[RMDB]
This 177-nucleotide RNA was probed chemically with 2A3 and DMS. The 2A3 profile rests on 5,550 reads. For DMS the reverse transcriptase was MarathonRT. Reactivities are given for positions 27 through 126. The RNA was probed in 150 mM KOAc, 10 mM MgCl2 and 150 mM bicine (pH 8.5) at 24 C. For 2A3 the reverse transcriptase was SuperScript II with manganese.
RNA sequence: GGGAACGACUCGAGUAGAGUCGAAAAGAUAUGGACAUACAUGCAGCUAUGAAGUCGGAAACGAUGGAGCUGGUGUGAUGUCCUAAGUCAAAACGAUGGGUUCUAGGUUCGCCUAGAACCCAUCGAACUUGUGUAGUUACUUCGGUAACUACACAAGAAAAGAAACAACAACAACAAC
Reactivity to 2A3 in 0.01 (KOAc 150mM, MgCl2 10mM, bicine 150mM(pH8.5), 24C), signal-to-noise 4, nucleotides 027 to 126: g040a010u120a060u130g000g000a000c010a000u060a000c010a020u210g300c010a070g000c000u100a160u300g050a060a000g020u000c020g030g030a040a100a060c010g000a020u050g030g020a000g000c000u010g030g030u020g010u050g100a020u010g000u000c000c000u000a020a010g060u030c050a020a000a110a150c040g000a000u000g020g020g000u010u010c010u000a000g010g020u030u140c300g090c120c000u040a000g010a000a010c010c000c000a010u000c000g000a000a010
Reactivity to DMS in 0.01 (KOAc 150mM, MgCl2 10mM, bicine 150mM(pH8.5), 24C), signal-to-noise 4, nucleotides 027 to 126: g000a060u000a300u000g000g000a020c000a000u000a020c000a010u000g000c000a010g030c010u010a180u010g000a120a230g000u000c000g010g000a140a070a200c000g010a000u000g000g010a020g030c000u000g000g020u000g000u010g010a010u010g000u000c000c000u000a010a070g000u000c060a050a060a110a170c030g010a000u000g000g000g000u000u000c000u000a000g000g000u000u000c300g030c010c000u000a000g010a010a010c000c000c000a000u000c000g000a010a070